[RMDB]
RNA sequence: GGGAACGACUCGAGUAGAGUCGAAAAGUGAAUAAGGCAGUAAGUAAACGAUGAGUUUUUACUCUGGUUUUGCCGAUGAGUCGUCAUUGACCUAGUGUGACUCUGCCGAUAUAGAUUAGGCGCACUACUAACAUUGGUACUUCGGUACCAAUGUUAGAAAAGAAACAACAACAACAAC
Reactivity to 2A3 in 0.01 (KOAc 150mM, MgCl2 10mM, bicine 150mM(pH8.5), 24C), signal-to-noise 3, nucleotides 027 to 126: g120u020g000a010a010u030a050a040g000g000c010a000g020u040a060a000g000u000a000a020a000c000g010a050u070g010a010g000u020u020u080u110u260a010c000u010c010u010g050g020u000u010u000u030g000c000c040g000a030u170g080a030g090u140c040g010u000c010a000u000u020g060a070c000c000u000a020g010u000g000u010g000a010c000u000c000u100g010c000c000g020a020u050a000u010a220g050a020u000u020a000g010g000c000g020c020a050c060u140a050
Reactivity to DMS in 0.01 (KOAc 150mM, MgCl2 10mM, bicine 150mM(pH8.5), 24C), signal-to-noise 5, nucleotides 027 to 126: g020u010g000a020a020u010a290a160g010g000c000a010g000u000a300a120g000u000a000a010a020c000g010a070u000g000a030g010u000u020u000u010u010a020c000u000c000u000g000g010u000u000u000u000g020c000c010g000a190u020g000a250g010u020c160g010u000c010a030u000u000g000a160c010c000u010a010g020u000g010u000g000a010c010u000c010u000g020c000c010g010a060u000a040u000a010g010a020u000u000a020g000g010c040g010c160a110c130u000a150